[RMDB]
RNA sequence: GGGAACGACUCGAGUAGAGUCGAAAAUAGCGUGUAUAUGCUCGCAAUAUCCAUUUUCAUGAGUUUUUACGCCAACUUGAUACGAUUCGCCGUCUAAUGGAUAAAACGCCUCAAAAACGCUUAGAUUUGUUAUUUCCAUGCGUUCAGUUUUAUCCAUUCCUUAAAAGUUGUUCGCAACUUUUAAGGAAAAAGAAACAACAACAACAAC
Reactivity to DMS in 0.01 (KOAc 150mM, MgCl2 10mM, bicine 150mM(pH8.5), 24C), signal-to-noise 1, nucleotides 027 to 156: u030a110g030c010g010u010g000u020a080u010a090u000g000c000u010c030g040c080a060a140u000a060u070c070c070a100u000u010u000u030c110a130u000g000a110g010u010u000u010u000u010a040c050g010c070c050a060a060c090u030u000g020a140u000a030c060g000a090u000u000c050g030c050c010g010u030c060u000a050a050u000g020g020a040u000a040a020a060a040c010g000c210c140u000c170a030a050a120a030a020c010g010c010u000u000a080g010a070u000u010u010g000u000u000a110u000u020u020c010c000a110u000g020c010g030u000u000c040a070g000u000u000u000u000a010u000c030c000a120u000
Reactivity to 2A3 in 0.01 (KOAc 150mM, MgCl2 10mM, bicine 150mM(pH8.5), 24C), signal-to-noise 3, nucleotides 027 to 156: u090a020g030c040g040u020g040u030a050u030a020u300g020c010u020c020g040c060a090a040u090a140u290c060c070a090u090u110u080u190c140a090u160g030a010g030u110u040u090u120u060a040c030g000c020c010a090a060c050u110u140g020a050u120a130c020g060a090u020u050c060g010c070c000g020u050c000u100a070a000u010g000g000a000u010a000a000a000a000c030g040c030c110u110c110a000a140a110a010a000c000g050c050u060u070a020g030a100u070u090u170g120u140u100a080u050u110u010c010c010a020u070g000c000g000u000u020c040a110g000u010u000u000u000a000u000c000c000a000u000
This 207-nucleotide RNA was probed chemically with DMS and 2A3. The reactions ran in a buffer of 150 mM KOAc, 10 mM MgCl2 and 150 mM bicine (pH 8.5), at 24 C. The DMS profile rests on 2,292 reads.